[RMDB]
RNA sequence: GGGAACGACUCGAGUAGAGUCGAAAAGUAGAAUCUGUCAAGCAAAACCCCAAAACCUUACACUGAGAGCAUUUAGCCUGAUUACUCUUUAAAUCAAAUCAGGCAAUAGAGACAAACUCGAGAGGUGAAACGGGAGUAAUGUUCGCAUUACUCCCAAGUCAUUUAUAAACUUCGGUUUAUAAAUGACAAAAGAAACAACAACAACAAC
Reactivity to DMS in 0.01 (KOAc 150mM, MgCl2 10mM, bicine 150mM(pH8.5), 24C), signal-to-noise 2, nucleotides 027 to 156: g030u000a110g010a100a080u010c050u010g020u000c060a080a080g000c080a130a040a070a160c030c020c020c040a090a090a080a070c080c040u010u000a060c070a100c100u000g020a070g000a120g030c010a300u000u000u000a080g020c020c000u000g000a020u010u010a080c010u010c070u000u000u010a060a040a030u000c020a060a100a030u000c000a030g000g040c000a050a010u000a060g000a190g020a120c060a050a070a020c000u000c020g000a100g000a060g000g030u000g030a070a090a080c150g060g020g030a020g030u000a030a010u010g020u000u010c200g000c000a030u000u000a010c000u000c010c010c000a000a010
Reactivity to 2A3 in 0.01 (KOAc 150mM, MgCl2 10mM, bicine 150mM(pH8.5), 24C), signal-to-noise 5, nucleotides 027 to 156: g060u080a020g050a080a090u040c040u080g080u090c070a050a030g020c030a040a060a080a180c000c010c010c030a020a110a050a080c050c040u100u090a050c100a020c090u080g040a020g000a000g050c030a030u050u060u090a030g020c000c000u010g010a000u010u040a050c010u050c080u120u270u160a070a090a040u210c070a030a020a010u000c000a000g000g000c000a000a000u020a010g020a000g010a020c030a050a100a040c010u010c020g080a100g000a010g070g050u090g020a100a080a030c080g010g000g000a000g000u000a000a000u010g010u010u030c070g000c050a000u000u000a000c000u000c000c000c010a000a000